An RNA of 207 nucleotides, treated with 2A3 and DMS and read out base by base. Reactivities are given for positions 27 through 156. The DMS profile rests on 1,770 reads. For 2A3 the reverse transcriptase was SuperScript II with manganese.
RNA sequence: GGGAACGACUCGAGUAGAGUCGAAAAACAAGGCCGUGCCUACUACGGUAGGCACGGCCUCGAAUUACGUUCAUCUACUUAAUCGUAGACGCAUCAAUACAUCAUUCAUGGAACGGGGGAUGGUGAAACUAGAAUCAAACGUUCGCGUUUGAUUCAACUAUCAGUACUGGUUCGCCAGUACUGAUAGAAAAGAAACAACAACAACAAC
Reactivity to 2A3 in 0.01 (KOAc 150mM, MgCl2 10mM, bicine 150mM(pH8.5), 24C), signal-to-noise 3, nucleotides 027 to 156: a010c010a000a000g010g020c000c010g000u010g000c050c000u000a000c010u030a020c250g050g010u000a010g080g000c000a000c010g000g030c010c000u000c000g020a000a010u160u080a010c010g010u010u000c000a000u000c000u010a000c000u060u150a090a050u190c040g000u000a010g010a030c000g000c020a090u180c080a110a120u090a200c000a010u010c000a000u010u010c000a010u040g070g000a020a000c000g010g000g000g000g010a000u010g000g040u020g040a050a020a010c080u080a090g000a000a000u000c000a000a000a000c010g020u060u070c300g030c020g110u000u010u000g000a000u000u000c000a000a000
Reactivity to DMS in 0.01 (KOAc 150mM, MgCl2 10mM, bicine 150mM(pH8.5), 24C), signal-to-noise 1, nucleotides 027 to 156: a140c010a010a020g030g030c050c020g000u000g000c020c000u000a070c020u000a120c300g140g030u010a010g000g010c040a010c020g000g010c010c000u000c010g000a060a080u000u010a060c030g010u000u020c010a270u010c000u000a010c050u000u010a170a120u000c290g010u000a010g020a000c040g030c080a070u000c120a060a170u000a130c010a070u010c040a080u000u000c010a070u010g010g010a030a050c080g020g010g030g010g010a060u020g020g040u010g030a060a040a150c140u000a070g000a010a000u000c000a010a010a030c000g050u010u010c300g020c020g000u010u000u010g000a020u000u020c050a080a130